[RMDB]
RNA sequence: GGGAACGACUCGAGUAGAGUCGAAAAGCAAUCUGAUUUAUUGCGUCUUGCCUAUCAUUUAACGCAAGCGUUAAAUGCGCAAAAUGCCGCGGCAAUCGCAGCAUUGGAGGAUUAAGUCAUGGAAAGAGACAGACUCUCUUUUCGAAGAGAGUCUGUCAAAAGAAACAACAACAACAAC
Reactivity to DMS in 0.01 (KOAc 150mM, MgCl2 10mM, bicine 150mM(pH8.5), 24C), signal-to-noise 2, nucleotides 027 to 126: g020c090a040a050u010c070u010g010a100u000u000u000a040u020u000g020c010g000u000c040u000u000g010c010c080u000a170u030c000a010u010u000u010a030a010c020g010c060a130a190g020c020g050u000u010a020a010a040u000g020c260g010c190a040a050a050a020u000g010c020c050g010c040g000g020c230a110a060u000c010g030c020a020g000c020a010u000u000g000g040a110g010g000a090u010u000a030a060g020u000c020a030u010g010g000a070a060a090g030a220
Reactivity to 2A3 in 0.01 (KOAc 150mM, MgCl2 10mM, bicine 150mM(pH8.5), 24C), signal-to-noise 2, nucleotides 027 to 126: g050c010a000a000u030c060u100g130a170u020u050u230a060u140u030g030c010g060u020c040u030u050g020c000c000u100a090u130c010a010u010u030u020a010a010c020g050c140a240a110g020c000g030u000u030a010a040a020u060g000c040g040c040a050a130a090a170u070g020c050c010g010c010g040g000c080a050a020u250c010g030c000a020g020c000a010u010u060g070g060a070g000g000a010u170u100a090a020g070u030c050a060u100g070g060a100a110a000g070a030
Record summary: This 177-nucleotide RNA was probed chemically with DMS and 2A3. It was measured as part of the RMDB library OK2TRN. For DMS the reverse transcriptase was MarathonRT.